[RMDB]
RNA sequence: GGGAACGACUCGAGUAGAGUCGAAAAAUUGUCUGGAGUGCACACAGAGGAUAAUGAGGCAGAAGAGAAGGCAUUGGCUGAAUUCUUGCUUAAUCAAGAGGUGAUUCAUCCCCGCGUUGCGCAUGCCCAAGGCUGGGACGUUCGCGUCCCAGCCUUGAAAAGAAACAACAACAACAAC
Reactivity to DMS in 0.01 (KOAc 150mM, MgCl2 10mM, bicine 150mM(pH8.5), 24C), signal-to-noise 1, nucleotides 027 to 126: a140u000u000g000u000c020u000g000g000a260g000u020g020c060a040c060a120c050a150g010a120g030g000a030u020a030a140u040g000a120g000g020c050a140g000a050a040g020a150g020a150a090g000g000c020a190u030u010g000g030c050u000g000a020a140u040u010c020u020u020g000c050u010u000a070a080u010c150a020a030g000a100g020g000u000g000a120u000u010c130a050u000c030c080c040c070g030c020g010u000u060g000c110g030c050a030u000g020c080c120